[RMDB]
Chemical mapping of a 207-nucleotide RNA with DMS. The DMS profile rests on 2,782 reads.

RNA sequence: GGGAACGACUCGAGUAGAGUCGAAAAGCCCAGAAGCCUCCCCUCAAAAUCGUUUCAGUCCAAAAUUGAUUCGGCGGCCCUGUCAUGAGGCCGUAACGAAGGCACGUACCCCUUCGAAUGGCGUCGGAACUUUCAGUCGUAUUCGUACGACUGAAAAUAGACAAGCUAAGUUCGCUUAGCUUGUCUAAAAAGAAACAACAACAACAAC
Reactivity to DMS in 0.01 (KOAc 150mM, MgCl2 10mM, bicine 150mM(pH8.5), 24C), signal-to-noise 1, nucleotides 027 to 156: g000c030c020c010a170g020a100a100g020c050c010u000c020c020c010c000u070c060a080a090a130a070u000c000g000u000u000u000c070a080g050u000c090c130a020a070a120a080u000u000g000a130u000u000c000g000g000c030g010g000c020c000c020u020g040u020c190a110u010g040a020g020g010c000c000g050u000a000a060c010g010a060a050g000g020c030a090c090g000u000a130c040c050c010c000u010u000c030g030a080a090u000g000g010c020g010u000c000g000g000a070a080c080u000u000u010c000a020g010u000c000g030u000a030u000u000c300g030u000a020c000g000a010c000u020g000a060a000a030a180